Notes
The record gives the reactivity of an RNA of 177 nucleotides to DMS and 2A3. The 2A3 profile rests on 3,898 reads. The RNA was probed in 150 mM KOAc, 10 mM MgCl2 and 150 mM bicine (pH 8.5) at 24 C.
[RMDB]
RNA sequence: GGGAACGACUCGAGUAGAGUCGAAAAUUUAACAGAUAGAUUUUGAACGAUUUCGUUUAAGCUUUCUGUUUUUUCUUUAAUAGCAUCGAAAUCUUCACCUUUAAGCGCUUCUUGUAGCUCAUCGCGACAGUAGUACGGAGUUCGCUCCGUACUACUGAAAAGAAACAACAACAACAAC
Reactivity to DMS in 0.01 (KOAc 150mM, MgCl2 10mM, bicine 150mM(pH8.5), 24C), signal-to-noise 2, nucleotides 027 to 126: u020u040u020a040a030c010a010g000a020u000a010g000a070u030u030u010u000g020a000a010c000g040a300u000u040u040c090g040u000u000u000a060a020g000c030u000u020u000c020u000g000u000u000u060u040u010u010c020u020u010u010a110a100u050a050g000c080a060u000c070g000a010a040a030u000c090u000u000c020a050c050c030u000u010u020a040a070g020c090g010c000u010u000c060u000u000g030u010a050g000c030u000c050a020u060c040g000c030g000a240
Reactivity to 2A3 in 0.01 (KOAc 150mM, MgCl2 10mM, bicine 150mM(pH8.5), 24C), signal-to-noise 6, nucleotides 027 to 126: u110u100u060a020a000c010a000g030a000u080a020g080a130u140u060u110u250g030a020a010c040g070a120u030u180u300c020g010u020u020u070a030a000g000c000u020u050u000c000u010g020u010u010u000u000u030u050c040u040u110u050a150a130u080a080g040c030a050u070c070g020a040a080a070u010c010u090u040c040a100c040c000u060u090u110a090a030g030c040g010c050u050u020c040u060u090g060u090a030g010c010u030c060a130u120c090g030c040g060a010